[RMDB]
RNA sequence: GGGAACGACUCGAGUAGAGUCGAAAAGCAAGAAAGGAUAGGAAAAAGACUGAUGAGUGUCGUAGAUAAAUCUUCGAUUCCGAGUAGUCUGACUAUUGGUAUCGAGGUAAUCCAUCUUUAAAACCAUAUUUAACGUAAAAUUCGUUUUACGUUAAAUAAAAGAAACAACAACAACAAC
Reactivity to 2A3 in 0.01 (KOAc 150mM, MgCl2 10mM, bicine 150mM(pH8.5), 24C), signal-to-noise 9, nucleotides 027 to 126: g060c040a040a040g060a150a090a020g070g010a030u170a120g050g060a050a070a010a040a020g030a010c040u090g080a110u140g050a190g150u110g010u040c020g020u020a010g020a090u100a070a110a050u040c000u010u010c010g010a000u030u010c000c000g030a010g050u040a000g010u010c300u270g060a130c000u030a010u030u030g010g000u010a000u010c000g000a000g000g010u010a000a010u000c020c010a010u010c000u040u100u060a070a180a020a020c020c010a010u010
Reactivity to DMS in 0.01 (KOAc 150mM, MgCl2 10mM, bicine 150mM(pH8.5), 24C), signal-to-noise 9, nucleotides 027 to 126: g020c170a080a070g010a080a060a060g010g010a030u000a110g010g000a040a100a110a120a170g000a040c020u000g010a120u020g010a140g010u010g000u000c020g000u010a070g020a090u010a050a070a090u010c010u000u000c000g010a020u000u000c110c000g000a050g010u010a010g010u000c120u010g010a060c020u000a020u000u000g000g010u000a020u010c020g000a030g000g010u010a050a070u010c040c020a060u000c020u000u000u000a060a050a090a110c050c030a160u000